[RMDB]
RNA sequence: GGGAACGACUCGAGUAGAGUCGAAAACAUGACUUUUUUUAAUGGACUGCUGAGGCAACUUUAAAAUCCAUUGACAAGUUUCUUCAACCCAUACCACACCGCCAGAGAGAGUGGGAAAUAAGUCUUGGUCCCCUGUGCUUACCGUGGCGCAUGGACACACUAGUGCACGGUUCGCCGUGCACUAGUGAAAAGAAACAACAACAACAAC
Reactivity to 2A3 in 0.01 (KOAc 150mM, MgCl2 10mM, bicine 150mM(pH8.5), 24C), signal-to-noise 1, nucleotides 027 to 156: c010a030u020g020a020c010u020u000u050u030u010u020u300a080a100u070g000g010a030c030u210g020c080u040g110a030g060g000c010a010a010c030u020u010u190a100a080a110a130u070c100c060a210u050u110g010a030c020a090a020g000u010u050u000c000u040u000c000a030a040c000c000c000a010u050a020c030c000a010c010a050c030c030g260c170c170a100g050a010g020a000g000a050g250u040g000g010g000a000a140a000u060a010a010g010u010c000u040u000g010g000u030c000c010c000c040u030g020u030g020c000u040u080a300c050c090g140u270g020g000c010g000c000a050u080g050g000a010c060a000